[RMDB]
RNA sequence: GGGAACGACUCGAGUAGAGUCGAAAAGCUUGUCGAUCCAGCCCGCGACCCGGAUUGCCACCGCGCGAACCGGGAACGGAUUCUCCGCUGAAUUCUGGGUCACUUCGCAGUCGCGCGGGUGAUCCUGCGACCCAGACACGUUCGCGUGUCUGGGUCGAAAAGAAACAACAACAACAAC
Reactivity to 2A3 in 0.01 (KOAc 150mM, MgCl2 10mM, bicine 150mM(pH8.5), 24C), signal-to-noise 1, nucleotides 027 to 126: g000c020u100u160g070u050c030g030a050u030c000c020a020g020c000c020c000g000c040g030a140c000c070c000g000g000a040u010u020g050c000c020a300c120c190g060c050g000c020g180a030a050c010c000g000g030g030a000a030c020g000g020a030u050u060c030u040c050c050g070c070u000g040a130a100u140u020c040u040g020g020g000u040c030a010c010u300u300c050g020c000a040g130u270c080g040c020g000c000g200g030g010u010g000a000u010c040c030u080g000
Structure probing data (2A3) for a 177-nucleotide construct. For 2A3, 841 sequencing reads were counted. The RNA was probed in 150 mM KOAc, 10 mM MgCl2 and 150 mM bicine (pH 8.5) at 24 C.